[RMDB]
RNA sequence: GGGAACGACUCGAGUAGAGUCGAAAACACAAAUUACACGGCGUCGGCAGGCUCAGUGCCGUGACAUGGAGACCAUCGAUCUUUCUUAAAACUGGGCCCUACAAUUCAACCCAUUGGCCAUCGUGAAGGUAUCACGAGGCUUCGGCCUCGUGAUACCAAAAGAAACAACAACAACAAC
Reactivity to 2A3 in 0.01 (KOAc 150mM, MgCl2 10mM, bicine 150mM(pH8.5), 24C), signal-to-noise 2, nucleotides 027 to 126: c020a000c010a000a130a000u270u300a080c000a000c050g000g000c000g050u100c010g070g030c010a040g010g020c000u050c110a000g050u000g000c000c000g090u050g010a000c030a060u070g170g040a160g030a200c000c040a300u070c130g070a190u010c050u090u240u000c040u070u180a070a070a000a010c010u020g000g010g030c000c020c000u010a020c120a000a070u070u100c000a060a060c000c000c010a010u000u110g090g000c020c010a130u090c000g000u050g160a160a060